Conditions: 150 mM KOAc, 10 mM MgCl2 and 150 mM bicine (pH 8.5), 24 C. Structure probing data (2A3) for a 177-nucleotide construct. For 2A3, 930 sequencing reads were counted. Reactivities are given for positions 27 through 126.
[RMDB]
RNA sequence: GGGAACGACUCGAGUAGAGUCGAAAAGGUAGGUACUGCGCAAUCUACCAGAGGCCGAGUGCAAGCCUCGUACUCGAAGAUCUCGAGAUCGGUAUGCCACAUAAUUUUAGGUAUACCAGCGCAGAAAGGGAUCGUAGUUGUUCGCAACUACGAUCCCAAAAGAAACAACAACAACAAC
Reactivity to 2A3 in 0.01 (KOAc 150mM, MgCl2 10mM, bicine 150mM(pH8.5), 24C), signal-to-noise 2, nucleotides 027 to 126: g000g010u000a000g040g000u070a150c030u070g000c000g030c000a000a030u010c020u000a010c010c010a000g000a000g030g000c020c000g110a090g040u070g110c070a110a040g020c050c000u080c080g010u060a010c000u030c000g030a050a030g030a120u020c010u000c000g050a000g000a040u080c000g000g000u000a000u010g010c000c000a110c000a070u200a150a170u080u090u070u280a020g000g000u040a000u000a000c000c000a060g000c020g000c010a000g000a060a010a000